[RMDB]
RNA sequence: GGGAACGACUCGAGUAGAGUCGAAAAAGAGUUCGCUUCGGCGAACUCUACAACGGGAAAACGGCCUCCGGGAAAGAUAAGGCGGAUUCCGUCCAAGCGCCGAGAGUGGUGCGUUCGCGCACCACAAAUGCAAUUGGUAAUUCGUUACCAAUUGCAUAAAAGAAACAACAACAACAAC
Reactivity to 2A3 in 0.01 (KOAc 150mM, MgCl2 10mM, bicine 150mM(pH8.5), 24C), signal-to-noise 3, nucleotides 027 to 126: a000g000a000g000u000u010c010g030c040u060u090c200g080g000c030g000a000a000c000u010c010u010a000c000a050a000c020g020g000g020a020a120a040a130c000g010g020c020c000u000c020c020g000g040g070a100a170a080g090a110u180a100a070g020g040c070g080g040a230u230u040c020c000g010u020c030c040a060a010g070c090g000c110c020g030a030g010a020g050u000g020g010u000g010c020g020u020u050c230g000c000g000c030a010c000c000a000c020a000a020
Reactivity to DMS in 0.01 (KOAc 150mM, MgCl2 10mM, bicine 150mM(pH8.5), 24C), signal-to-noise 4, nucleotides 027 to 126: a030g000a020g000u000u000c000g030c010u000u010c170g020g020c000g000a010a010c000u000c000u000a030c100a070a110c040g000g010g000a050a040a120a130c040g000g000c020c020u000c040c020g010g000g000a090a060a110g010a090u010a080a150g010g010c020g000g010a200u010u010c020c020g010u000c020c070a080a050g020c170g010c000c010g010a170g010a140g020u000g000g010u000g010c000g010u000u010c230g010c010g020c000a000c000c000a010c010a020a060
An RNA of 177 nucleotides, treated with 2A3 and DMS and read out base by base. Values cover nucleotides 27 to 126. Conditions: 150 mM KOAc, 10 mM MgCl2 and 150 mM bicine (pH 8.5), 24 C.